[RMDB]
RNA sequence: GGGAACGACUCGAGUAGAGUCGAAAAUAAUGGUUGUAGAUAAAUUAAAACACUCCAUUUACACCAACACAGUUUAUUCUGCUGUUAUUACUGAAAUAGCCGGCGUGGAUCAAUUAACAGCAAAGAUGAAUCCAUCGCAUAGUGAAUUUUUGGCCAAUGCAUACAUAGAAUUCGUUCUAUGUAUGCAAAAAGAAACAACAACAACAAC
Reactivity to 2A3 in 0.01 (KOAc 150mM, MgCl2 10mM, bicine 150mM(pH8.5), 24C), signal-to-noise 3, nucleotides 027 to 156: u100a010a020u010g020g060u060u050g070u090a060g030a200u210a130a230a190u300u110a070a090a070a000c000a010c010u010c020c000a000u000u020u080a040c040a040c010c010a040a020c030a000c010a070g020u040u080u090a130u260u070c060u060g060c030u010g040u100u030a080u110u060a040c040u030g020a060a090a130u040a080g020c020c030g050g000c020g020u030g000g020a020u030c050a030a170u130u110a090a090c040a080g090c070a140a120a000g090a050u080g010a080a020u000c000c010a020u140c070g020c050a040u050a050g050u070g130a120a080u090u100u050u060u150g020g030c070c010a050a010
Reactivity to DMS in 0.01 (KOAc 150mM, MgCl2 10mM, bicine 150mM(pH8.5), 24C), signal-to-noise 2, nucleotides 027 to 156: u010a070a130u010g000g020u000u000g010u000a100g010a180u000a040a100a200u010u000a050a110a120a120c040a070c050u000c000c020a110u000u000u000a070c040a200c010c020a030a080c080a100c090a100g030u000u000u000a070u050u000c060u010g040c000u000g010u000u000a060u010u000a250c020u000g000a010a090a110u000a210g030c040c030g070g030c020g000u000g010g000a050u010c030a050a150u010u010a070a070c060a140g000c120a100a040a150g000a110u010g020a090a060u000c020c000a040u010c090g060c030a120u000a050g020u000g010a150a110u000u000u000u000u000g040g000c010c040a060a240